[RMDB]
RNA sequence: GGGAACGACUCGAGUAGAGUCGAAAAGCAUAGUUCGCUAUGCACAGGAUCCUAAGUCACGUGGAGGCCAGAGGGAGUCCUGGUCGGAAACGACCACGGACUUUGAUCUCUGGCUCCCCACCCACGUGAUAUGGACUCAGUGACCCUUCGGGGUCAAUGUCCUUUGUUAAUUCGUUAACAAAGGACAAAAAGAAACAACAACAACAAC
Reactivity to DMS in 0.01 (KOAc 150mM, MgCl2 10mM, bicine 150mM(pH8.5), 24C), signal-to-noise 2, nucleotides 027 to 156: g000c020a020u000a020g050u000u000c300g040c020u010a020u010g000c000a240c100a170g000g000a080u000c020c020u020a050a230g000u010c000a000c000g030u000g030g010a300g050g030c010c020a010g000a060g080g020g000a060g020u000c010c030u000g060g020u000c010g020g000a140a110a220c010g010a030c000c020a000c080g050g010a000c000u010u000u000g020a060u010c000u000c030u000g000g000c020u030c020c040c000c040a190c240c010c000a030c030g010u000g010a030u000a280u010g000g000a070c020u000c040a150g000u010g000a050c000c000c010u000u010c280g020g050g020g010u020c000a010a100

About this RNA:
Chemical mapping of a 207-nucleotide RNA with DMS. DMS adducts were read by reverse transcription with MarathonRT. The data come from the RNA Mapping Database (RMDB), library RNAMAK. For DMS, 2,634 sequencing reads were counted. In probing experiments dimethyl sulfate is read out at A N1 and C N3, which are open when not base-paired.